[RMDB]
RNA sequence: GGGAACGACUCGAGUAGAGUCGAAAAGAUAUGGAACUUGCAACAGCCGUACUUCGGAAACGAAGUCACGGACAUGCAACUUCCUAAGUCAAAGGUACUAGGUACAGUUCGCUGUACCUAGUACCAAGUUAGUGGAAUUCUUCGGAAUUCCACUAACAAAAGAAACAACAACAACAAC
Reactivity to 2A3 in 0.01 (KOAc 150mM, MgCl2 10mM, bicine 150mM(pH8.5), 24C), signal-to-noise 2, nucleotides 027 to 126: g020a020u050a030u110g000g000a000a000c020u020u000g000c010a060a090c080a300g130c010c000g010u000a000c000u000u000c010g010g020a060a020a020c000g020a000a020g000u040c070a010c000g010g050a030c010a020u010g000c000a000a000c010u010u020c010c010u010a100a010g030u030c040a200a010a070g020g000u000a000c000u000a000g010g000u010a000c000a010g030u010u140c190g120c140u010g010u020a000c000c000u000a000g000u000a000c000c000a010a000
Reactivity to DMS in 0.01 (KOAc 150mM, MgCl2 10mM, bicine 150mM(pH8.5), 24C), signal-to-noise 3, nucleotides 027 to 126: g000a010u000a270u000g000g010a020a020c100u000u000g000c000a010a110c300a130g000c010c000g000u000a040c000u000u010c010g020g000a070a050a120c010g000a000a010g000u000c170a000c000g000g020a070c060a140u000g000c000a000a000c100u000u000c000c000u000a030a150g000u000c030a080a130a140g000g010u000a000c000u000a000g000g000u000a010c000a010g010u000u020c210g020c020u010g020u010a000c000c010u000a000g000u010a000c000c030a010a010

Notes
Structure probing data (2A3 and DMS) for a 177-nucleotide construct. DMS adducts were read by reverse transcription with MarathonRT. 2A3 adducts were read by reverse transcription with SuperScript II with manganese. For DMS, 2,750 sequencing reads were counted.